[RMDB]
RNA sequence: GGGAACGACUCGAGUAGAGUCGAAAAAGACUUGUAUUCGUACAAGUCUACAGAAAUUUCGCUAGCACACGAUCACACCUAGCGAUCUCAAUAACGAUCGAACAACGUGUCAAUUCGUUGACACGAACAGAUUAAAUCCAUUCGUGGAUUUAAUCUGAAAAGAAACAACAACAACAAC
Reactivity to 2A3 in 0.01 (KOAc 150mM, MgCl2 10mM, bicine 150mM(pH8.5), 24C), signal-to-noise 9, nucleotides 027 to 126: a000g000a000c000u000u000g000u000a020u010u090c210g020u030a000c000a000a010g000u000c000u000a010c000a020g240a050a280a010u030u030u010c010g000c010u000a010g000c110a040c020a020c150g020a010u020c010a030c010a030c100c010u000a000g000c010g010a010u000c030u020c040a080a230u190a170a080c100g010a010u020c010g030a070a030c040a050a050c040g000u000g000u000c010a010a030u050u060c160g070u080u010g000a000c000a000c000g000a030a010
Reactivity to DMS in 0.01 (KOAc 150mM, MgCl2 10mM, bicine 150mM(pH8.5), 24C), signal-to-noise 6, nucleotides 027 to 126: a040g010a000c000u000u000g000u000a010u000u020c200g030u000a000c000a010a010g010u000c000u000a060c130a110g000a090a140a040u000u000u000c010g000c010u010a020g020c120a090c120a090c040g000a020u000c010a180c140a170c230c000u000a000g010c010g010a010u010c010u000c300a050a060u010a060a060c160g010a010u000c010g000a170a080c240a070a110c010g020u000g000u000c000a010a020u000u020c200g010u000u000g000a020c000a000c000g010a060a110
This 177-nucleotide RNA was probed chemically with 2A3 and DMS. For DMS the reverse transcriptase was MarathonRT. The 2A3 profile rests on 28,122 reads. The data come from the RNA Mapping Database (RMDB), library M2PK50. 2A3 adducts were read by reverse transcription with SuperScript II with manganese. Reactivities are given for positions 27 through 126. The DMS profile rests on 6,458 reads.